[RMDB]
RNA sequence: GGGAACGACUCGAGUAGAGUCGAAAACAUGGAGACAGAUGUACAUACAGGUCUAUGCACACAUGUACACAUGCACAGGCACCUGUGCACACAUACAUACAGAUGCACCCGCAACAUCCCGUCUGUGCUGCCCUAUUAGGUUUGUGGCCAUUUGGGAGUAUUAGGUACGUUUCGACGUACCUAAUACAAAAGAAACAACAACAACAAC
Reactivity to DMS in 0.01 (KOAc 150mM, MgCl2 10mM, bicine 150mM(pH8.5), 24C), signal-to-noise 3, nucleotides 027 to 156: c040a050u000g000g000a130g030a150c080a060g000a050u000g010u000a060c070a180u000a080c040a070g020g020u000c090u000a090u000g020c000a000c020a100c130a070u020g020u000a000c050a120c120a070u000g010c000a050c020a040g010g040c150a090c140c020u010g010u000g020c000a040c000a080c130a090u000a050c030a080u000a080c050a070g010a120u000g000c030a080c060c010c070g000c050a070a060c040a060u000c000c030c030g020u000c020u040g010u000g020c020u000g020c020c010c020u000a080u010u010a090g020g000u000u010u000g020u000g000g000c000c050a240u000u010u000g000g040g030a300
Reactivity to 2A3 in 0.01 (KOAc 150mM, MgCl2 10mM, bicine 150mM(pH8.5), 24C), signal-to-noise 9, nucleotides 027 to 156: c050a070u120g070g030a060g030a040c060a030g150a160u050g040u090a030c030a040u110a070c070a080g050g030u020c080u170a160u170g030c050a010c010a010c010a020u010g010u040a020c050a000c020a060u050g030c000a000c000a010g090g010c080a110c160c040u020g010u020g020c010a000c010a000c000a010u120a020c010a000u080a020c040a050g070a080u040g020c010a040c010c020c010g040c050a050a080c010a100u030c000c010c020g040u010c010u030g100u140g020c020u020g000c000c000c020u140a260u150u180a080g040g040u070u100u170g050u070g030g000c010c010a030u050u060u090g030g000g010a090
The record gives the reactivity of an RNA of 207 nucleotides to DMS and 2A3. Reactivities are given for positions 27 through 156. For 2A3 the reverse transcriptase was SuperScript II with manganese. It was measured as part of the RMDB library OK3TST.